Source information: An RNA of 177 nucleotides, treated with DMS and read out base by base.
RNA sequence: GGGAACGACUCGAGUAGAGUCGAAAAUAUCCUGCGUUCGCGCAGGAUACAGCACAAAACUCGGAGGGCGCGCACUCGGAGACAAAACAAAAAGCCAAGCAAGUGAGCUUAGAUUCGUCUAAGCUAAGAAAAAAAACGGAUUCGUCCGUUUUUUUUCAAAAGAAACAACAACAACAAC
Reactivity to DMS in 0.01 (KOAc 150mM, MgCl2 10mM, bicine 150mM(pH8.5), 24C), signal-to-noise 1, nucleotides 027 to 126: u000a000u000c000c000u000g000c000g050u000u030c230g030c020g000c010a000g000g010a010u000a010c120a090g020c060a090c110a100a130a100a150c030u040c050g000g020a100g030g000g020c070g010c090g020c020a050c010u010c030g030g010a060g000a030c150a040a040a080a140c200a020a050a030a050a100g000c050c080a010a090g000c170a030a110g020u020g000a010g000c000u000u000a020g000a060u000u010c230g000u000c000u000a000a000g000c010u010a050a170
For DMS, 766 sequencing reads were counted.